[RMDB]
This 207-nucleotide RNA was probed chemically with 2A3 and DMS. The DMS profile rests on 2,042 reads. Conditions: 150 mM KOAc, 10 mM MgCl2 and 150 mM bicine (pH 8.5), 24 C. For DMS the reverse transcriptase was MarathonRT. The data come from the RNA Mapping Database (RMDB), library OK3TST. 2A3 adducts were read by reverse transcription with SuperScript II with manganese.

RNA sequence: GGGAACGACUCGAGUAGAGUCGAAAACUUUACUUUUUUGGAUAGGGCUGCUAUCACACCAUCCGUAAGCGAAAGGAAGAUAUCUGGAAUAGGUCGCAAUGGCUGAAAAUAGAAGUGGUAGUAAUAGGGAUGCGUCCAUGCUUGAUGUGUCUGAUGCGCAUUGUCGUUUAUUCGUAAACGACAAUGCAAAAGAAACAACAACAACAAC
Reactivity to 2A3 in 0.01 (KOAc 150mM, MgCl2 10mM, bicine 150mM(pH8.5), 24C), signal-to-noise 2, nucleotides 027 to 156: c030u180u190u170a170c040u160u230u120u030u040u170g040g000a060u030a110g060g040g030c030u080g010c040u030a020u120c040a040c000a000c070c020a010u000c000c000g000u040a050a030g060c050g040a130a040a030g050g010a040a050g050a040u140a100u080c060u080g000g030a060a070u020a060g000g010u020c010g000c070a080a080u060g020g000c020u060g050a100a090a030a030u100a010g070a160a000g010u030g050g020u010a050g010u040a000a080u090a090g010g040g000a050u060g020c020g030u040c000c000a050u070g020c060u040u070g010a040u020g000u010g000u000c010u010g070a130u080g020c060
Reactivity to DMS in 0.01 (KOAc 150mM, MgCl2 10mM, bicine 150mM(pH8.5), 24C), signal-to-noise 1, nucleotides 027 to 156: c020u020u010u000a090c020u000u010u000u020u010u020g070g000a010u010a000g000g030g080c040u000g000c080u010a050u010c040a070c020a050c020c030a030u030c030c000g060u010a030a070g040c060g040a130a110a120g030g000a090a080g000a190u010a010u000c020u020g010g000a070a060u010a100g020g000u010c010g000c080a080a090u000g020g010c000u000g010a080a040a060a110u010a080g030a060a130g040u010g040g000u000a070g020u020a060a120u000a110g020g010g010a090u010g050c090g030u020c000c030a080u010g000c000u010u010g000a140u000g010u000g030u000c020u000g000a140u020g040c150
In probing experiments dimethyl sulfate is read out at A N1 and C N3, which are open when not base-paired.